Structure probing data (DMS) for a 177-nucleotide construct.
Reactivities are rounded to 0.1 and cut off at 0 and 3.
The RNA was probed in 150 mM KOAc, 10 mM MgCl2 and 150 mM bicine (pH 8.5) at 24 C.
RNA sequence: GGGAACGACUCGAGUAGAGUCGAAAAAGCGCAAGGUUGAUGCAAUGAGCUCCAACAUCAAAAGGAUGAAGGCCAUAGACCUCACCGGCACCUGGAGCUGUUUAAGCGCUGUUAAUUACUGCAAGAAUCAGUCGGUUCUUUUCGAAGAACCGACUGAAAAAGAAACAACAACAACAAC
Reactivity to DMS in 0.01 (KOAc 150mM, MgCl2 10mM, bicine 150mM(pH8.5), 24C), signal-to-noise 1, nucleotides 027 to 126: a040g000c030g010c030a180a120g000g000u000u020g020a080u020g000c160a090a070u020g000a040g000c020u020c000c010a080a130c130a070u000c140a140a150a180a100g000g000a100u010g040a150a100g020g040c010c040a180u020a180g000a150c040c000u000c120a030c000c030g020g020c180a030c210c090u000g010g000a020g000c010u000g020u020u000u020a060a210g010c060g010c010u000g000u030u010a040a180u000u000a030c060u000g000c080a030a210g000a150a050